An RNA of 177 nucleotides, treated with 2A3 and DMS and read out base by base. For DMS the reverse transcriptase was MarathonRT. 2A3 adducts were read by reverse transcription with SuperScript II with manganese. Values cover nucleotides 27 to 126.

[RMDB]
RNA sequence: GGGAACGACUCGAGUAGAGUCGAAAAGAUAUGGAUCCAUACCAGGGAGCUCCUGGUUCGGAAACGAACCCUGAGCAUCGAUCUGGUUGGAUCCUAAGUCAAACUGUCUGUGUUCGCACAGACAGAACGUUAUCACUACGUUCGCGUAGUGAUAACGAAAAGAAACAACAACAACAAC
Reactivity to 2A3 in 0.01 (KOAc 150mM, MgCl2 10mM, bicine 150mM(pH8.5), 24C), signal-to-noise 4, nucleotides 027 to 126: g010a010u020a020u060g000g000a000u020c010c000a060u220a270c000c000a020g050g080g100a160g020c010u000c010c020u000g000g000u000u000c000g000g010a030a010a010c010g000a010a000c000c000c010u010g010a010g000c030a070u300c140g170a300u000c010u000g000g000u000u000g000g000a000u000c000c010u000a000a000g010u000c020a040a060a150c020u020g010u000c000u000g030u000g060u070u110c300g050c090a000c000a000g000a020c000a000g010a050a010
Reactivity to DMS in 0.01 (KOAc 150mM, MgCl2 10mM, bicine 150mM(pH8.5), 24C), signal-to-noise 3, nucleotides 027 to 126: g020a010u000a160u010g000g000a000u000c010c010a050u020a020c010c000a000g010g000g000a160g040c000u000c010c020u000g000g010u000u000c010g020g020a040a040a060c000g010a000a000c000c000c040u000g000a000g010c000a300u000c250g010a150u010c000u000g000g010u000u000g000g020a010u000c000c010u000a010a070g000u000c020a130a130a210c010u000g010u010c000u000g020u010g010u000u020c280g010c000a010c000a010g000a020c010a010g000a060a110